[RMDB]
RNA sequence: GGGAACGACUCGAGUAGAGUCGAAAACGGUCGGACUCCCUCCCCGAAGGCGACGGAUUCACCGCGGUAGGCGGAUUCGAACUCAAGAUCCAGCGAUUCAGUCAUGUGUUCAUAUAUAUCAACGGCCUACAUGCUUAGGUUUCGACCUAAGCAUGUAAAAAGAAACAACAACAACAAC
Reactivity to 2A3 in 0.01 (KOAc 150mM, MgCl2 10mM, bicine 150mM(pH8.5), 24C), signal-to-noise 3, nucleotides 027 to 126: c030g000g010u030c010g020g060a080c040u030c000c000c000u030c040c010c000c010g040a040a030g060g020c020g010a060c000g040g000a020u070u040c040a010c050c010g020c050g080g120u120a070g100g030c030g000g020a020u090u080c040g030a050a020c010u010c100a070a020g020a060u050c030c050a030g040c040g070a030u050u110c050a000g060u030c010a050u110g040u010g010u070u040c060a010u080a010u030a010u000a030u230c020a030a040c020g020g000c010c000
Reactivity to DMS in 0.01 (KOAc 150mM, MgCl2 10mM, bicine 150mM(pH8.5), 24C), signal-to-noise 6, nucleotides 027 to 126: c180g000g010u000c010g020g000a170c090u000c010c010c020u000c020c010c020c030g020a120a100g010g000c030g000a130c070g000g010a070u000u000c070a070c020c000g000c080g000g030u010a080g020g020c030g000g010a090u000u000c060g020a080a070c070u000c050a080a100g000a060u010c030c070a060g020c050g010a090u000u000c090a100g020u000c040a060u000g000u000g010u000u000c070a060u000a080u010a080u010a070u010c090a060a110c080g010g000c060c040